[RMDB]
RNA sequence: GGGAACGACUCGAGUAGAGUCGAAAAGAUAUGGACAGAGCUUUUGACGCUCUGGCGUCGGAAACGACGCCCAGAGCGAUAAGCUCGUCCUAAGUCAAACGGUUAACGUGUUCGCACGUUAACCGAAUCAUGACAUUGCGUUCGCGCAAUGUCAUGAAAAAGAAACAACAACAACAAC
Reactivity to DMS in 0.01 (KOAc 150mM, MgCl2 10mM, bicine 150mM(pH8.5), 24C), signal-to-noise 2, nucleotides 027 to 126: g000a050u000a230u000g000g010a000c010a160g020a010g000c000u000u000u010u010g000a250c100g010c010u000c000u000g000g000c000g020u000c000g000g000a060a090a110c000g020a000c030g000c130c070c030a030g010a010g040c000g010a030u000a030a010g010c000u000c000g000u000c000c000u000a020a040g000u000c020a100a150a200c020g000g000u000u020a000a000c010g030u000g010u000u000c270g030c000a010c010g020u000u010a010a000c000c000g000a000a050
Reactivity to 2A3 in 0.01 (KOAc 150mM, MgCl2 10mM, bicine 150mM(pH8.5), 24C), signal-to-noise 2, nucleotides 027 to 126: g010a000u090a000u110g020g010a010c110a160g040a180g000c040u190u100u170u250g220a180c170g000c000u060c000u000g040g000c000g020u000c010g000g000a080a030a040c000g000a000c020g000c070c030c000a010g000a000g000c000g020a010u010a000a000g000c000u000c000g000u020c000c000u010a100a020g040u010c020a170a070a040c020g030g020u020u010a000a010c000g000u060g040u150u130c300g000c100a010c030g010u000u000a000a010c000c000g000a000a020

Chemical mapping of a 177-nucleotide RNA with DMS and 2A3. The RNA was probed in 150 mM KOAc, 10 mM MgCl2 and 150 mM bicine (pH 8.5) at 24 C.